[RMDB]
RNA sequence: GGGAACGACUCGAGUAGAGUCGAAAAAAGAGGUUAAUGACCGAAGACAGUGUGGAGGUUAGCUUAGAAGCAGCUAUCCUUUAAAGAGUGCGUAACAGCUCACUCACCGAGGUUAUUUGCCUCCAAGGGAUUCGAAGAAUUUCGAUUCUUCGAAUCCAAAAGAAACAACAACAACAAC
Reactivity to 2A3 in 0.01 (KOAc 150mM, MgCl2 10mM, bicine 150mM(pH8.5), 24C), signal-to-noise 2, nucleotides 027 to 126: a000a000g010a000g010g000u020u030a000a000u000g010a000c000c010g040a050a000g020a000c030a020g010u020g010u050g060g000a000g000g020u000u000a000g000c000u000u020a020g010a040a000g030c010a000g000c000u000a010u010c000c000u010u000u000a010a010a000g010a000g000u020g000c000g000u000a020a010c000a020g000c000u000c000a010c000u000c000a010c010c000g010a020g000g000u000u010a000u000u000u030g010c010c000u000c000c000a030a030g170
Reactivity to DMS in 0.01 (KOAc 150mM, MgCl2 10mM, bicine 150mM(pH8.5), 24C), signal-to-noise 4, nucleotides 027 to 126: a110a050g000a000g000g000u000u000a010a000u020g000a020c000c000g000a080a040g000a020c300a110g020u010g040u000g000g010a020g000g000u000u030a000g000c000u000u000a270g000a110a200g000c250a000g000c010u000a000u000c000c010u000u000u000a000a020a130g010a090g000u000g000c060g000u000a060a110c170a180g000c000u000c010a020c010u000c070a060c030c020g010a100g000g040u000u000a010u010u000u000g000c050c020u010c020c130a060a110g030

An RNA of 177 nucleotides, treated with 2A3 and DMS and read out base by base. For 2A3 the reverse transcriptase was SuperScript II with manganese. Values are in units of 0.01, from 0 to 300, in steps of 10. Reactivities are given for positions 27 through 126. The RNA was probed in 150 mM KOAc, 10 mM MgCl2 and 150 mM bicine (pH 8.5) at 24 C. DMS adducts were read by reverse transcription with MarathonRT. The 2A3 profile rests on 11,571 reads.